[RMDB]
RNA sequence: GGGAACGACUCGAGUAGAGUCGAAAAAUACAGCGUAAUCGUGCGGAGGAAAACGGCACUCCGAAAAUCCGGUACGAUUAUGAUCCCACUGCGUCGACGCUAGAUGCAGAACCGGAUUGCCGAGGAACCUUAACCGUAGCUUCGGCUACGGUUAAGGAAAAGAAACAACAACAACAAC
Reactivity to DMS in 0.01 (KOAc 150mM, MgCl2 10mM, bicine 150mM(pH8.5), 24C), signal-to-noise 1, nucleotides 027 to 126: a130u010a080c170a080g000c030g000u000a000a000u000c020g000u000g000c030g010g040a140g020g000a090a040a090a150c050g010g020c050a160c130u020c010c020g000a050a050a060a050u000c000c000g000g040u020a000c030g000a020u030u000a000u000g000a130u000c000c060c000a290c010u000g000c010g050u010c000g030a060c230g010c220u000a030g010a030u000g000c000a020g000a140a030c150c060g000g010a060u000u000g040c050c030g000a160g000g000a030a130
Reactivity to 2A3 in 0.01 (KOAc 150mM, MgCl2 10mM, bicine 150mM(pH8.5), 24C), signal-to-noise 1, nucleotides 027 to 126: a000u190a040c060a000g060c010g080u000a100a000u040c000g020u030g020c010g000g040a090g080g140a040a190a090a040c020g020g000c060a050c050u040c010c020g010a090a030a020a030u010c020c040g040g060u070a050c010g010a010u020u090a040u030g020a010u020c000c010c020a030c020u000g000c000g030u040c000g020a070c110g050c300u170a030g000a070u000g010c000a010g040a000a010c020c010g000g000a020u060u060g000c010c030g010a010g080g010a050a110